[RMDB]
Structure probing data (2A3 and DMS) for a 207-nucleotide construct.
For 2A3, 13,576 sequencing reads were counted.
Source: RMDB library OK3TST, as collected in RNAgym.
For DMS the reverse transcriptase was MarathonRT.

RNA sequence: GGGAACGACUCGAGUAGAGUCGAAAACGUACGUGGAGACACGUACGACGUGACUUCGGUCACGAAUAGAGGCAACUCCUGCGCCUCACGCGCGAGGCGUCGGUGGUCGGCGAGCCCACGGACGCAAAAACUCGCGCGUAAAUAACUAGCAGGAGAACAUUAAUGAUGCUUUCGAGCAUCAUUAAUGAAAAGAAACAACAACAACAAC
Reactivity to 2A3 in 0.01 (KOAc 150mM, MgCl2 10mM, bicine 150mM(pH8.5), 24C), signal-to-noise 5, nucleotides 027 to 156: c010g000u000a000c000g010u000g010g030a040g010a030c000a000c000g000u000a000c000g010a020c000g000u000g000a000c010u030u050c260g090g000u000c010a000c000g000a040a070u200a090g010a000g000g000c020a090a300c080u000c000c000u010g000c000g000c000c000u020c050a010c000g010c010g010c000g000a020g020g020c020g020u010c100g110g010u020g000g010u020c030g020g120c170g040a030g010c000c000c000a000c030g090g000a000c000g000c020a040a040a040a100a150c010u000c010g000c000g000c000g000u000a000a000a000u010a010a020c160u120a010g000c000a000g000g000a000g000a010a000
Reactivity to DMS in 0.01 (KOAc 150mM, MgCl2 10mM, bicine 150mM(pH8.5), 24C), signal-to-noise 3, nucleotides 027 to 156: c030g010u000a010c000g070u000g000g010a300g000a300c000a000c000g000u000a000c000g020a090c040g000u010g000a020c000u010u010c280g020g020u000c000a000c010g020a130a090u010a180g010a040g030g020c030a070a120c010u000c010c000u000g030c000g030c030c020u000c010a010c010g010c010g040c000g000a030g040g000c020g010u010c020g010g030u000g000g050u000c010g000g000c150g010a300g020c240c020c020a020c020g000g000a030c010g020c170a050a030a060a070a300c010u000c000g020c010g000c010g020u000a020a030a070u000a090a170c080u000a130g010c010a030g000g010a020g000a120a140